[RMDB]
The record gives the reactivity of an RNA of 177 nucleotides to 2A3 and DMS. The DMS profile rests on 1,819 reads. Reactivities are given for positions 27 through 126. It was measured as part of the RMDB library M2PK90. The RNA was probed in 150 mM KOAc, 10 mM MgCl2 and 150 mM bicine (pH 8.5) at 24 C.
RNA sequence: GGGAACGACUCGAGUAGAGUCGAAAAGCAAAGAAAUUUUAUCCCAAUAAGGCCAAGCGUGCAAGUCGAAUAAAGCUAAUGCUGCUAGCGAGCACGCGAGCCCUAGCAGACUCCUAGCGAGAAAAAAUCUCUUAUUAGACUUCGGUCUAAUAAGAGAAAAAGAAACAACAACAACAAC
Reactivity to 2A3 in 0.01 (KOAc 150mM, MgCl2 10mM, bicine 150mM(pH8.5), 24C), signal-to-noise 2, nucleotides 027 to 126: g010c020a000a000a180g150a050a260a010u100u180u140u170a110u100c020c000c050a020a060u110a110a000g030g010c010c000a050a070g020c010g000u000g000c010a070a060g130u050c080g090a090a080u200a190a150a000g010c020u050a120a000u270g080c020u020g000c000u000a000g000c000g030a030g010c030a000c010g000c030g000a000g010c010c000c000u010a010g000c050a020g030a130c020u050c010c020u140a050g000c090g090a000g050a050a110a010a010a000a030
Reactivity to DMS in 0.01 (KOAc 150mM, MgCl2 10mM, bicine 150mM(pH8.5), 24C), signal-to-noise 3, nucleotides 027 to 126: g020c160a040a040a060g000a080a100a090u000u000u010u000a090u000c010c000c000a110a150u020a110a060g000g020c000c070a080a230g020c020g020u010g000c020a070a170g000u010c060g010a150a100u000a000a090a060g020c030u000a070a130u010g040c070u000g010c090u000a040g010c050g020a240g030c010a020c030g000c000g000a120g010c050c030c030u020a030g000c060a080g010a150c040u000c020c030u020a100g010c110g000a060g000a020a010a090a040a090a070